[RMDB]
RNA sequence: GGGAACGACUCGAGUAGAGUCGAAAAUGAAUGACUGGCAUAAAGUUUUGUCUUUGUUUUGACGCCUUAGAAAUCUCUCAGAGUGGCAUCAACGAAUAAGGGCUUUGGAGGGUCCUCACAUAUACUGAGGGAUCUGGAAUGUAACAUACAUGCCCAAACCAUCAUGAGGAUUCGUCCUCAUGAUGGUAAAAGAAACAACAACAACAAC
Reactivity to DMS in 0.01 (KOAc 150mM, MgCl2 10mM, bicine 150mM(pH8.5), 24C), signal-to-noise 2, nucleotides 027 to 156: u010g000a140a140u000g020a030c040u010g040g030c030a110u000a080a140a190g000u000u010u000u000g070u000c030u010u000u000g030u000u000u000u000g010a100c000g010c020c000u000u000a090g000a090a080a040u000c030u000c050u000c050a140g010a210g050u000g030g040c040a120u000c030a050a110c080g040a070a120u000a020a040g020g010g010c020u030u000u000g000g000a080g010g000g000u000c000c000u010c030a030c050a090u000a130u010a150c060u000g000a080g010g040g020a090u010c080u010g000g020a100a080u010g000u000a060a070c040a100u000a060c020a020u000g020c000c000c000a000a280
Reactivity to 2A3 in 0.01 (KOAc 150mM, MgCl2 10mM, bicine 150mM(pH8.5), 24C), signal-to-noise 3, nucleotides 027 to 156: u070g030a030a050u060g030a020c040u020g040g060c020a070u080a110a200a050g030u080u050u110u060g030u040c000u010u070u080g050u030u050u100u040g020a030c000g050c000c000u030u020a030g040a100a110a040u030c020u010c000u010c040a020g060a000g040u060g070g000c020a060u060c030a130a090c100g090a040a010u050a120a080g000g020g000c010u030u050u100g140g010a090g000g050g000u000c000c010u030c020a040c000a010u230a030u090a130c040u040g010a020g020g020g000a010u010c010u020g040g020a110a080u110g010u090a080a040c000a040u140a080c020a020u080g010c000c000c020a060a090